[RMDB]
RNA sequence: GGGAACGACUCGAGUAGAGUCGAAAAUGUCUUAACAACAUUCAUUGACGCAGCACGAGGCCCCGCAGGUGUGGAGUCUGAUGUUGAGACCAAUGAAAUUGUUGACUCUGUGCAGUAUGCUCAUAAAGUAUCAAUAUUCGUUCGCGAAUAUUGAUACAAAAGAAACAACAACAACAAC
Reactivity to 2A3 in 0.01 (KOAc 150mM, MgCl2 10mM, bicine 150mM(pH8.5), 24C), signal-to-noise 4, nucleotides 027 to 126: u080g010u000c020u050u120a050a020c010a000a010c010a080u010u000c000a000u000u000g010a010c030g000c060a000g020c000a010c040g090a040g000g000c000c010c010c010g000c040a180g090g300u300g020u040g130g000a010g000u000c010u050g100a130u030g020u010u010g020a050g010a060c020c000a000a010u010g020a020a020a030u070u040g000u020u030g020a030c000u030c020u070g060u040g000c000a010g110u170a060u170g030c010u010c060a080u100a120a160a020
Reactivity to DMS in 0.01 (KOAc 150mM, MgCl2 10mM, bicine 150mM(pH8.5), 24C), signal-to-noise 5, nucleotides 027 to 126: u010g000u000c030u000u010a040a090c040a020a000c100a110u000u000c020a010u000u000g010a100c030g000c040a040g010c010a020c090g010a040g000g000c000c010c000c010g040c010a210g020g010u020g060u000g010g000a030g010u000c010u000g000a030u000g010u000u000g000a060g000a160c080c020a010a010u000g000a010a030a230u000u010g010u000u000g000a080c060u010c090u000g020u010g020c060a090g010u010a070u000g010c020u000c040a080u000a070a090a160

Description
Chemical mapping of a 177-nucleotide RNA with 2A3 and DMS. For DMS, 5,859 sequencing reads were counted. Conditions: 150 mM KOAc, 10 mM MgCl2 and 150 mM bicine (pH 8.5), 24 C. The 2A3 profile rests on 4,580 reads. It was measured as part of the RMDB library 15KREP.